The data come from the RNA Mapping Database (RMDB), library TTRDEL. Structure probing data (DMS) for a 177-nucleotide construct. For DMS the reverse transcriptase was MarathonRT. Conditions: 150 mM KOAc, 10 mM MgCl2 and 150 mM bicine (pH 8.5), 24 C. DMS (dimethyl sulfate) methylates the pairing face of unpaired adenines and cytosines.

RNA sequence: GGGAACGACUCGAGUAGAGUCGAAAAGAUAUGGAGAAGACUGCGAUGAAAUGUACUCCCCACCUCGGAAACGAGAGGUACAUGGAGCAGUACCUUCUCCUAAGUCAAACGGGACUUCGGUCCCGAAGGUUAACACAGAGUUCGCUCUGUGUUAACCAAAAGAAACAACAACAACAAC
Reactivity to DMS in 0.01 (KOAc 150mM, MgCl2 10mM, bicine 150mM(pH8.5), 24C), signal-to-noise 3, nucleotides 027 to 126: g010a000u010a150u010g000g000a010g000a020a010g010a090c000u000g020c000g000a160u030g010a100a110a000u000g000u000a010c010u010c030c010c010c010a260c210c000u000c000g030g000a030a010a070c000g010a010g000a080g010g020u000a000c000a010u000g010g000a030g030c010a010g000u000a080c220c000u010u000c000u000c010c010u010a000a070g000u000c020a080a090a220c030g000g000g000a020c010u000u010c160g010g000u000c000c010c000g000a020a040